Chemical mapping of a 177-nucleotide RNA with DMS. The DMS profile rests on 1,816 reads. The reactions ran in a buffer of 150 mM KOAc, 10 mM MgCl2 and 150 mM bicine (pH 8.5), at 24 C.

[RMDB]
RNA sequence: GGGAACGACUCGAGUAGAGUCGAAAAGAUAUGGAAGCUUAGAUAUGCAUUCCGAAGAACUCGGAAACGAGGGAGGAGGGCAUGUAGCUUCCUAAGUCAAAUCCGAAAGAGUUCGCUCUUUCGGAAAGAACUGAAAGAUCUUCGGAUCUUUCAGUUCAAAAGAAACAACAACAACAAC
Reactivity to DMS in 0.01 (KOAc 150mM, MgCl2 10mM, bicine 150mM(pH8.5), 24C), signal-to-noise 2, nucleotides 027 to 126: g010a040u000a300u010g020g010a020a010g030c000u000u000a110g020a080u010a020u000g000c010a090u010u000c000c000g010a080a120g050a130a160c000u000c000g000g000a110a120a150c000g020a010g000g010g000a060g000g000a020g000g000g010c000a000u000g000u000a020g000c010u000u000c000c020u000a000a090g000u000c040a110a120a120u010c010c000g000a000a000a010g020a010g030u010u010c300g010c000u000c000u000u000u010c000g010g010a000a020a040